[RMDB]
RNA sequence: GGGAACGACUCGAGUAGAGUCGAAAAGAUAUGGAGUCAGCUGGGAGCCUAGACUCGGAAACGAGUCGAAAGGCGACGAUCAGCAGACUCCUAAGUCAAAACCGCUCACACUUCGGUGUGAGCGGAACAAUGUGUAGACCUUCGGGUCUACACAUUGAAAAGAAACAACAACAACAAC
Reactivity to DMS in 0.01 (KOAc 150mM, MgCl2 10mM, bicine 150mM(pH8.5), 24C), signal-to-noise 2, nucleotides 027 to 126: g010a010u000a020u010g000g000a010g030u000c020a070g050c020u000g000g000g000a020g040c000c000u010a300g000a000c010u000c000g030g000a030a040a000c040g000a010g000u000c000g010a040a160a050g040g020c000g000a030c300g010a020u010c000a000g030c000a030g020a010c000u010c000c000u000a010a050g000u000c000a100a070a150a180c010c000g000c000u000c000a010c000a000c000u000u010c220g030g000u000g000u000g000a010g030c030g010g000a030a020
Reactivity to 2A3 in 0.01 (KOAc 150mM, MgCl2 10mM, bicine 150mM(pH8.5), 24C), signal-to-noise 1, nucleotides 027 to 126: g010a010u010a000u080g000g010a010g000u010c000a000g040c000u000g000g040g010a010g010c000c000u000a040g000a000c000u020c000g000g000a050a000a000c000g000a000g020u010c000g030a140a110a010g040g010c030g010a140c000g000a000u020c020a000g000c000a000g000a000c000u000c010c010u000a000a000g000u000c000a040a010a020a190c000c000g080c010u000c000a010c010a010c020u100u180c300g150g020u000g010u010g010a010g010c020g000g000a000a020